[RMDB]
RNA sequence: GGGAACGACUCGAGUAGAGUCGAAAAGGUCCCUUCGGGGACCAAAAAGAUAUGGAGAAUUCUGCUGAGUGUCGGAAACGACACCAGUUUUGAGAACUCCUAAGUCAAAAACCGCCUUCGGGCGGAACACAAUACUUCAGUUCGCUGAAGUAUUGUGAAAAGAAACAACAACAACAAC
Reactivity to 2A3 in 0.01 (KOAc 150mM, MgCl2 10mM, bicine 150mM(pH8.5), 24C), signal-to-noise 2, nucleotides 027 to 126: g000g010u010c010c010c000u010u030c240g010g000g000g030a000c000c000a000a010a010a010a000g030a000u040a020u090g010g010a020g020a090a200u070u000c010u010g010c010u000g090a110g300u000g010u000c010g060g000a120a080a100c000g000a000c000a000c000c000a000g010u040u060u220u130g060a040g000a030a010c010u000c000c000u020a210a010g050u020c010a030a040a070a280a300c000c020g040c010c000u050u080c220g150g020g000c000g000g000a030a000
Reactivity to DMS in 0.01 (KOAc 150mM, MgCl2 10mM, bicine 150mM(pH8.5), 24C), signal-to-noise 2, nucleotides 027 to 126: g020g000u000c000c000c000u000u010c160g010g030g020g010a010c010c000a020a010a050a130a030g000a050u010a300u010g000g000a020g010a080a150u010u000c000u000g000c000u000g000a180g020u000g000u000c010g020g000a080a070a170c010g010a000c000a010c000c000a000g000u000u000u000u010g000a030g000a010a210c000u010c000c000u000a050a120g000u000c030a110a130a100a140a190c000c000g010c010c010u000u020c190g010g010g030c000g010g000a020a060
Record summary: This 177-nucleotide RNA was probed chemically with 2A3 and DMS. For 2A3, 3,674 sequencing reads were counted. Values are in units of 0.01, from 0 to 300, in steps of 10. The RNA was probed in 150 mM KOAc, 10 mM MgCl2 and 150 mM bicine (pH 8.5) at 24 C. For DMS, 2,328 sequencing reads were counted.